This 207-nucleotide RNA was probed chemically with DMS and 2A3. The reactions ran in a buffer of 150 mM KOAc, 10 mM MgCl2 and 150 mM bicine (pH 8.5), at 24 C. Reactivities are given for positions 27 through 156.

[RMDB]
RNA sequence: GGGAACGACUCGAGUAGAGUCGAAAAGCUAGAUGAAGGUACAGAAGCAACCUAAAAUGUAGUGAUAAACUGAGUCAGGAGACAGUAAGAACACGAAAGACAGUGUGCUUGGAGGAGGCCAAAUUGGUUUGCUUAAGGAAGGACGCUCCCCUGAAGAGUACUGGAUAUCGUUCGCGAUAUCCAGUACAAAAGAAACAACAACAACAAC
Reactivity to DMS in 0.01 (KOAc 150mM, MgCl2 10mM, bicine 150mM(pH8.5), 24C), signal-to-noise 1, nucleotides 027 to 156: g030c040u010a070g010a100u000g040a290a070g010g020u000a120c030a120g060a120a140g010c020a090a080c030c050u060a010a010a140a080u000g010u000a040g000u000g040a100u020a060a060a060c100u000g020a110g000u000c030a100g000g040a120g000a030c030a110g000u010a050a090g030a000a060c030a060c090g000a040a080a100g010a120c110a090g030u010g030u000g000c010u000u010g020g010a030g000g010a110g040g010c060c040a040a090a070u000u020g070g000u010u000u000g010c030u000u000a040a090g010g000a080a070g010g000a100c050g030c020u000c000c000c000c000u020g010a060a130g000a290
Reactivity to 2A3 in 0.01 (KOAc 150mM, MgCl2 10mM, bicine 150mM(pH8.5), 24C), signal-to-noise 3, nucleotides 027 to 156: g000c040u040a050g000a150u040g030a050a000g020g020u070a040c030a050g090a100a020g030c030a010a030c010c020u080a070a070a050a070u110g010u060a040g030u010g050a080u080a060a100a010c020u040g010a010g080u080c030a060g000g050a020g020a030c020a010g020u090a140a000g030a050a000c010a000c090g040a040a060a020g070a000c030a110g070u030g010u020g100c020u030u090g020g010a040g000g020a000g000g000c000c030a020a020a140u130u080g010g010u090u120u080g000c010u060u030a020a010g040g020a010a050g010g000a020c030g010c010u040c010c020c020c000u020g060a030a010g020a020